[RMDB]
RNA sequence: GGGAACGACUCGAGUAGAGUCGAAAAGAUAUGGAUAAUCCAGGACCGUUGAAAUCCUUCGGAAACGAAGGAUGGAGGUUCAGCUGGAGUUAUCCUAAGUCAAAAGUCUUCCUGUUCGCAGGAAGACCCUCAAGAAGGCGUUCGCGCCUUCUUGAGGAAAAGAAACAACAACAACAAC
Reactivity to DMS in 0.01 (KOAc 150mM, MgCl2 10mM, bicine 150mM(pH8.5), 24C), signal-to-noise 1, nucleotides 027 to 126: g010a040u000a300u030g040g000a040u000a000a060u000c010c000a000g020g000a090c030c000g000u000u000g000a300a050a010u000c000c010u000u000c000g000g020a110a100a120c010g010a010a010g020g000a010u000g020g000a080g010g010u000u010c300a140g000c130u000g020g010a040g020u010u000a000u000c010c010u000a040a110g010u010c040a100a130a070a190g010u000c000u000u000c000c010u000g010u020u010c300g010c000a010g030g000a010a000g000a000c000
The record gives the reactivity of an RNA of 177 nucleotides to DMS. The data come from the RNA Mapping Database (RMDB), library TTRDES. Conditions: 150 mM KOAc, 10 mM MgCl2 and 150 mM bicine (pH 8.5), 24 C.